Description
Conditions: 150 mM KOAc, 10 mM MgCl2 and 150 mM bicine (pH 8.5), 24 C. Chemical mapping of a 177-nucleotide RNA with 2A3 and DMS. 2A3 adducts were read by reverse transcription with SuperScript II with manganese. For 2A3, 2,330 sequencing reads were counted. The data come from the RNA Mapping Database (RMDB), library OK2TST. Values are in units of 0.01, from 0 to 300, in steps of 10.

RNA sequence: GGGAACGACUCGAGUAGAGUCGAAAACUGGGUCGCCGAACACAAACUAUUAAAAAGCCACAAAUCUUCGCAAUGACUAUAUCCUGGUUAAAUGUAAACAGAGAUUCAGAGUCGAACAUUUACAUUGCGACUCAUAUAGUUUCGACUAUAUGAGUCGAAAAGAAACAACAACAACAAC
Reactivity to 2A3 in 0.01 (KOAc 150mM, MgCl2 10mM, bicine 150mM(pH8.5), 24C), signal-to-noise 3, nucleotides 027 to 126: c020u030g000g000g000u010c010g000c040c020g090a080a000c030a000c030a050a230a050c030u100a080u260u200a140a170a050a030a020g070c040c000a020c020a050a100a050u050c030u070u030c060g000c070a030a180u140g020a010c020u030a020u020a030u290c010c010u030g030g080u040u080a090a060a030u070g040u050a010a020a000c020a020g020a000g000a060u090u080c040a040g030a040g300u030c010g000a020a000c010a010u050u060u060a040c040a040u030u130g090
Reactivity to DMS in 0.01 (KOAc 150mM, MgCl2 10mM, bicine 150mM(pH8.5), 24C), signal-to-noise 3, nucleotides 027 to 126: c080u000g000g000g000u000c010g020c020c030g000a060a070c110a080c070a080a080a110c070u010a100u000u010a050a090a060a120a090g000c030c020a040c070a050a080a110u010c040u000u000c100g030c080a060a090u010g000a080c060u010a070u020a040u000c000c030u000g020g000u000u000a040a050a060u000g000u000a000a010a020c060a040g000a270g010a020u000u000c210a110g020a120g010u000c010g000a100a180c150a080u000u010u000a030c050a040u000u000g010